RNA sequence: GGGAACGACUCGAGUAGAGUCGAAAAGAUUCUCCGCAGCAGCAGUUCUCCCUCGCCGCCUGAUCUCAGGUAGCGACGAGACUGCUCCUGCACUAAGGAGUGUCAGCCCGGGGCUGUUCCCGACCCGGAUCCUGGCAUCAGCUAGGGGACUAAACCUACUAAAAAGAAUCUUCGGAUUCUUUUUAGUAAAAGAAACAACAACAACAAC
Reactivity to 2A3 in 0.01 (KOAc 150mM, MgCl2 10mM, bicine 150mM(pH8.5), 24C), signal-to-noise 2, nucleotides 027 to 156: g030a040u090u000c020u000c030c040g000c020a010g020c010a000g040c000a000g040u300u100c010u010c030c030c000u020c010g010c030c010g000c010c000u100g110a300u260c260u190c180a000g000g000u000a010g000c000g000a000c010g000a000g010a000c010u000g000c000u000c010c000u000g000c020a050c050u150a110a130g030g000a020g080u020g020u020c020a000g030c000c000c000g000g000g000g000c070u110g000u020u030c020c000c000g030a030c010c000c000g070g020a020u050c010c020u020g020g000c020a060u080c080a170g040c020u150a060g000g030g000g030a010c060u150a130a020a050c000c000u020